This 177-nucleotide RNA was probed chemically with 2A3 and DMS. The RNA was probed in 150 mM KOAc, 10 mM MgCl2 and 150 mM bicine (pH 8.5) at 24 C. It was measured as part of the RMDB library OK1LIB.

RNA sequence: GGGAACGACUCGAGUAGAGUCGAAAAACACGCAGCUGCCCGCGCGUGCCGUGGGCGCCGACCUGGUUUUGAUCGGUGCCCCCGCCAGCCAGGAGGAUCGCAGCCGAUGGGAAGAGCUGAUCCCACCUAAUUAGCCUACUUUCGAGUAGGCUAAUUAAAAAGAAACAACAACAACAAC
Reactivity to 2A3 in 0.01 (KOAc 150mM, MgCl2 10mM, bicine 150mM(pH8.5), 24C), signal-to-noise 7, nucleotides 027 to 126: a010c080a010c040g040c010a040g010c020u130g030c000c020c000g040c010g000c020g040u050g030c030c020g020u080g000g000g000c000g010c000c000g010a030c000c020u150g270g080u140u110u120u220g150a120u030c010g010g000u020g000c000c000c000c000c010g000c010c010a030g030c010c030a030g000g030a030g040g020a050u060c030g000c070a020g020c020c020g090a150u160g040g020g020a040a030g050a040g090c050u060g010a040u030c000c010c000a130c020c030
Reactivity to DMS in 0.01 (KOAc 150mM, MgCl2 10mM, bicine 150mM(pH8.5), 24C), signal-to-noise 8, nucleotides 027 to 126: a110c100a080c100g010c030a060g010c020u010g010c050c030c040g000c050g000c040g020u010g000c130c040g010u010g000g000g000c010g020c000c000g000a030c040c010u000g010g010u020u040u050u010g000a090u010c000g010g020u000g010c010c010c000c030c040g000c070c030a100g000c030c050a070g010g010a200g010g000a060u000c060g020c040a120g000c040c020g000a110u030g010g000g010a080a070g000a100g010c010u020g010a050u010c010c000c010a080c120c070